[RMDB]
RNA sequence: GGGAACGACUCGAGUAGAGUCGAAAAGUGGAUCGGUGAAGGCGACAUGAAGCCCAUCACCAAGGGCAACAUGACCAAGCGCGACGUGCACCCCGCCAAGAUCGCGACGAUCUUCGUCGCCUCCGCGGAAACCGUCCGUGCGAACCCGGCCAACUACCAGUCGUAGUAAUUUCGAUUACUACGACUGAAAAGAAACAACAACAACAAC
Reactivity to 2A3 in 0.01 (KOAc 150mM, MgCl2 10mM, bicine 150mM(pH8.5), 24C), signal-to-noise 5, nucleotides 027 to 156: g090u060g000g040a280u090c020g000g010u080g100a160a100g060g020c110g100a040c010a010u010g010a020a010g000c000c030c000a060u170c080a060c100c070a050a070g000g000g000c010a040a020c000a030u060g140a300c030c000a080a020g000c010g010c020g010a010c010g040u110g020c080a110c000c030c000c000g000c010c000a030a020g020a040u060c040g000c000g010a010c010g040a060u130c060u190u100c120g010u000c000g000c000c010u010c010c020g000c000g000g000a040a030a000c020c000g000u060c070c060g000u000g000c010g010a060a040c000c000c000g000g000c000c000a070a050c020u080a070c030
Reactivity to DMS in 0.01 (KOAc 150mM, MgCl2 10mM, bicine 150mM(pH8.5), 24C), signal-to-noise 3, nucleotides 027 to 156: g010u000g030g020a080u010c050g070g020u020g010a120a130g030g010c000g010a170c060a050u000g020a060a300g030c000c010c030a140u000c100a300c170c140a110a130g000g030g040c010a030a300c010a020u000g010a120c070c000a040a130g020c010g040c000g010a050c020g030u010g040c060a120c090c080c020c010g000c010c060a040a080g000a040u010c060g000c020g040a080c040g000a050u010c090u000u010c030g010u000c020g020c000c010u000c020c060g000c050g030g000a180a100a080c040c010g000u000c040c040g050u010g000c030g030a060a170c110c000c000g030g010c010c040a020a120c060u010a110c080
This 207-nucleotide RNA was probed chemically with 2A3 and DMS. For DMS, 4,228 sequencing reads were counted. The 2A3 profile rests on 5,218 reads. DMS adducts were read by reverse transcription with MarathonRT. The data come from the RNA Mapping Database (RMDB), library OK3TST.